Chemical mapping of a 177-nucleotide RNA with 2A3.
RNA sequence: GGGAACGACUCGAGUAGAGUCGAAAAAUGGAAAGUUUGCAAUUUUCUGUGGCAUUAUCUACGGUAUGGAAGUUUAUAAGUAGAACGAAUAAGUAUAUUGACGAAACAACGCCUUGGGUAUUAGCUAAACCGUACUCGAGUUCGCUCGAGUACGGUUAAAAGAAACAACAACAACAAC
Reactivity to 2A3 in 0.01 (KOAc 150mM, MgCl2 10mM, bicine 150mM(pH8.5), 24C), signal-to-noise 1, nucleotides 027 to 126: a070u020g000g090a000a090a090g170u260u300u300g070c120a100a060u030u030u030u020c000u000g000u000g000g000c000a000u190u000a100u020c000u000a010c000g000g000u030a050u020g000g000a070a070g000u000u030u000a160u090a210a100g070u160a000g140a040a010c000g000a020a210u030a300a000g000u110a000u000a030u160u000g010a000c030g000a030a040a040c080a000a000c080g000c040c000u100u190g000g000g000u120a090u000u000a100g000c000u100a000
Conditions: 150 mM KOAc, 10 mM MgCl2 and 150 mM bicine (pH 8.5), 24 C.